The data come from the RNA Mapping Database (RMDB), library M2PK90.
This 177-nucleotide RNA was probed chemically with 2A3 and DMS.
Values cover nucleotides 27 to 126.
The reactions ran in a buffer of 150 mM KOAc, 10 mM MgCl2 and 150 mM bicine (pH 8.5), at 24 C.
2A3 adducts were read by reverse transcription with SuperScript II with manganese.
For 2A3, 2,256 sequencing reads were counted.

RNA sequence: GGGAACGACUCGAGUAGAGUCGAAAAUAAAAGAUCACAACAAGUAUACGUUGAUAAGUAUACAAUAGUACGAUAAGCGCAAGAUCAACUUGCGAGAUAUGGCGCAACAUAUCAAACAACAAAAAAACUGUAAAUUAUAGUUCGCUAUAAUUUACAGAAAAGAAACAACAACAACAAC
Reactivity to 2A3 in 0.01 (KOAc 150mM, MgCl2 10mM, bicine 150mM(pH8.5), 24C), signal-to-noise 2, nucleotides 027 to 126: u110a000a080a020a020g130a070u100c050a010c040a200a020c010a170a000g000u000a000u000a000c010g010u030u030g130a170u110a300a030g000u020a010u000a020c030a020a030u050a020g030u040a020c030g020a060u040a180a050g070c000g030c020a000a010g000a070u140c020a030a220c030u000u010g010c000g000a010g010a000u000a000u010g070g000c160g000c180a050a070c000a050u030a000u060c010a000a090a000c020a000a020c040a000a120a020a010a010a010a010
Reactivity to DMS in 0.01 (KOAc 150mM, MgCl2 10mM, bicine 150mM(pH8.5), 24C), signal-to-noise 2, nucleotides 027 to 126: u000a070a090a050a130g020a090u000c080a050c110a090a080c080a120a300g010u020a000u000a010c000g000u000u000g020a110u010a070a100g000u000a010u000a020c000a030a070u020a030g010u000a070c130g000a070u000a060a160g000c000g000c010a030a010g000a240u030c250a170a090c020u000u000g000c000g020a200g020a020u000a000u000g000g010c120g000c200a110a130c020a030u000a010u000c030a140a100a090c120a030a050c040a020a010a140a040a020a120a100